[RMDB]
RNA sequence: GGGAACGACUCGAGUAGAGUCGAAAAUGUCAUUGGCUUGUGUGUCAUUGAGAUCCCCGGCCAGGCGCAUUAACCGAUCUGCACGUAUGGCUUCGUCCUACGUCGCGAUUUGGACGCCAGAACCAUGUACAUUUCUCUCAUUCGUGAGAGAAAUGUAAAAAGAAACAACAACAACAAC
Reactivity to DMS in 0.01 (KOAc 150mM, MgCl2 10mM, bicine 150mM(pH8.5), 24C), signal-to-noise 8, nucleotides 027 to 126: u010g000u000c010a020u000u010g010g000c080u000u000g010u020g010u010g020u010c030a030u010u000g010a080g000a100u000c040c010c010c140g010g030c070c040a210g000g000c010g010c250a100u020u020a100a170c030c020g000a010u000c020u020g050c010a020c000g000u000a010u040g020g010c010u050u060c280g000u030c000c010u000a010c010g000u000c140g040c020g010a020u000u000u020g040g000a240c040g000c010c010a080g010a120a180c040c040a110u020g020
Reactivity to 2A3 in 0.01 (KOAc 150mM, MgCl2 10mM, bicine 150mM(pH8.5), 24C), signal-to-noise 9, nucleotides 027 to 126: u120g020u010c010a030u010u040g060g020c050u130u140g070u080g040u040g020u260c020a050u030u040g030a040g010a080u050c010c000c000c000g000g010c020c030a040g000g000c020g000c060a080u080u160a070a060c000c010g010a010u000c080u190g000c010a010c010g010u010a080u300g000g000c000u170u160c130g120u140c010c000u000a000c000g000u030c090g000c000g000a000u020u020u220g010g010a010c010g000c010c000a000g030a030a010c030c010a060u140g030